[RMDB]
RNA sequence: GGGAACGACUCGAGUAGAGUCGAAAAGAAGAGCAGGCAGAUAAUCUUGUGCAGUAUGCAUGCUCGUAACUCCACAAGAAGCAAGGCAGCAAAAGAAUAACUGCCACUGCACAAGUGGAGCCGCAGACGAUCCUGCCACUUUCGAGUGGCAGGAUCGAAAAGAAACAACAACAACAAC
Reactivity to 2A3 in 0.01 (KOAc 150mM, MgCl2 10mM, bicine 150mM(pH8.5), 24C), signal-to-noise 1, nucleotides 027 to 126: g090a070a000g000a000g010c010a000g030g000c010a020g010a060u080a120a140u170c100u070u170g030u030g030c000a010g000u100a020u080g000c010a000u010g000c000u000c030g000u000a020a080c010u050c040c110a030c000a130a080g130a020a000g020c000a010a020g000g020c010a000g000c070a010a080a100a060g170a000a070u250a010a040c000u000g000c000c000a100c100u000g000c000a000c000a050a010g000u020g000g040a090g000c020c010g030c000a040g000a000
Reactivity to DMS in 0.01 (KOAc 150mM, MgCl2 10mM, bicine 150mM(pH8.5), 24C), signal-to-noise 1, nucleotides 027 to 126: g020a010a150g000a050g070c100a030g000g050c000a120g000a080u120a000a130u000c000u000u000g010u070g010c000a110g000u000a090u000g000c050a010u040g010c050u000c000g000u000a160a000c080u000c030c030a080c060a010a100g000a070a090g000c040a190a270g000g000c000a000g050c300a000a000a120a080g000a300a030u000a070a230c000u000g000c000c000a050c120u000g010c000a000c040a120a200g000u010g000g000a110g000c040c000g000c050a150g000a140